[RMDB]
RNA sequence: GGGAACGACUCGAGUAGAGUCGAAAAGAAGCCUGCUUCAGACAGGAGUAAUCCCAGUAGAAACAGGAGUAAUCCCUGCUGAAACAUGGUUUUCACCCUUCCUUUCCACGCAGGGGUAAUCCCAGUAGUUUAACCUUAGGUUCGCCUAAGGUUAAACAAAAGAAACAACAACAACAAC
Reactivity to 2A3 in 0.01 (KOAc 150mM, MgCl2 10mM, bicine 150mM(pH8.5), 24C), signal-to-noise 1, nucleotides 027 to 126: g040a020a030g080c000c010u010g000c000u060u030c030a300g060a300c000a000g050g030a030g020u020a040a060u020c000c040c010a000g070u060a010g120a050a190a020c020a010g000g010a020g050u040a030a060u030c000c010c000u000g020c000u010g020a000a000a040c010a050u160g000g050u070u090u040u120c060a070c000c020c060u010u030c040c010u100u100u030c050c010a020c080g030c050a000g050g050g000g030u030a000a060u040c000c000c000a050g060u110a020
Reactivity to DMS in 0.01 (KOAc 150mM, MgCl2 10mM, bicine 150mM(pH8.5), 24C), signal-to-noise 3, nucleotides 027 to 126: g010a090a100g000c010c000u000g010c030u010u000c030a060g010a210c040a050g010g000a040g010u000a110a170u010c020c000c040a130g010u000a160g000a090a070a110c070a060g010g000a050g000u000a170a170u020c020c000c000u000g000c030u010g000a030a020a030c100a030u010g010g010u000u020u000u010c060a150c110c010c020u000u000c050c040u000u010u010c120c110a080c180g000c130a040g010g000g000g000u000a040a110u000c010c000c010a110g020u010a060
This 177-nucleotide RNA was probed chemically with 2A3 and DMS. 2A3 adducts were read by reverse transcription with SuperScript II with manganese. The DMS profile rests on 2,069 reads. Source: RMDB library VIROID, as collected in RNAgym. DMS adducts were read by reverse transcription with MarathonRT. Reactivities are rounded to 0.1 and cut off at 0 and 3. Values cover nucleotides 27 to 126. The 2A3 profile rests on 1,357 reads. Conditions: 150 mM KOAc, 10 mM MgCl2 and 150 mM bicine (pH 8.5), 24 C.